An RNA of 177 nucleotides, treated with DMS and 2A3 and read out base by base. The DMS profile rests on 1,345 reads. For DMS the reverse transcriptase was MarathonRT. Conditions: 150 mM KOAc, 10 mM MgCl2 and 150 mM bicine (pH 8.5), 24 C.
RNA sequence: GGGAACGACUCGAGUAGAGUCGAAAACAUAGGGAGUUCGCUCCCUAUGAAAAUGCCGGCUGCUAGAAAAGUGCUUCAAAGAGUGGGAGCACUGCCGAAAAAAAAGGGCGAUGUUCGCAUCGCCCAACACAUCUAAGGACUUCGGUCCUUAGAUGUGAAAAGAAACAACAACAACAAC
Reactivity to DMS in 0.01 (KOAc 150mM, MgCl2 10mM, bicine 150mM(pH8.5), 24C), signal-to-noise 1, nucleotides 027 to 126: c010a000u000a010g000g000g020a010g000u000u020c250g020c000u000c000c010c000u000a020u020g000a050a040a100a080u000g000c130c010g010g010c020u000g010c160u030a070g000a110a040a070a050g020u000g000c010u010u010c010a050a090a150g000a110g020u000g010g000g000a010g020c000a000c000u000g010c070c010g000a000a000a020a010a020a070a080a190g000g020g000c000g000a020u010g010u000u030c110g000c010a010u000c010g010c000c000c000a020a050
Reactivity to 2A3 in 0.01 (KOAc 150mM, MgCl2 10mM, bicine 150mM(pH8.5), 24C), signal-to-noise 2, nucleotides 027 to 126: c010a000u010a000g000g000g000a010g020u020u040c070g080c050u000c010c000c000u010a010u000g000a000a000a000a010u050g030c030c020g030g030c020u080g010c060u100a030g120a060a120a030a010g020u000g010c010u000u000c020a100a160a050g140a110g100u170g060g000g000a010g000c000a010c010u020g000c000c020g060a110a030a000a030a010a000a020a010g000g000g030c000g000a000u010g000u010u060c150g030c070a010u010c000g000c000c000c000a010a000